[RMDB]
RNA sequence: GGGAACGACUCGAGUAGAGUCGAAAAGAUAUGGACUACCCACCGUAUGAACUACAAUGGAACGUCGGAAACGACGUUCAUGUUGCAUACGAGGUCCUAAGUCAAAAUCAGAGCUUCGGCUCUGAAACGCAUAACCUACCUUCGGGUAGGUUAUGCGAAAAGAAACAACAACAACAAC
Reactivity to 2A3 in 0.01 (KOAc 150mM, MgCl2 10mM, bicine 150mM(pH8.5), 24C), signal-to-noise 1, nucleotides 027 to 126: g020a010u080a050u140g030g070a040c040u270a300c060c060c060a020c000c000g000u000a000u020g130a200a110c060u070a010c300a120a190u180g180g000a020a000c010g020u000c000g060g070a090a050a000c020g000a020c020g000u000u020c000a000u020g020u000u100g080c020a000u020a000c030g020a090g000g000u070c000c000u030a300a040g070u040c170a030a020a000a300u060c010a000g000a000g040c030u120u300c300g120g000c000u010c010u000g000a000a010a000
Reactivity to DMS in 0.01 (KOAc 150mM, MgCl2 10mM, bicine 150mM(pH8.5), 24C), signal-to-noise 1, nucleotides 027 to 126: g000a010u000a280u000g030g030a020c000u000a200c020c000c050a300c110c000g000u000a000u000g000a020a010c100u000a100c020a070a110u000g020g020a000a000c000g020u010c030g030g010a140a070a220c000g000a010c000g000u000u000c000a010u000g010u000u000g000c030a000u000a000c010g000a200g060g000u000c000c020u010a020a100g040u000c060a160a110a160a160u000c010a010g010a010g000c000u000u020c300g000g000c000u000c010u010g000a000a020a050

Chemical mapping of a 177-nucleotide RNA with 2A3 and DMS. The 2A3 profile rests on 861 reads. 2A3 adducts were read by reverse transcription with SuperScript II with manganese.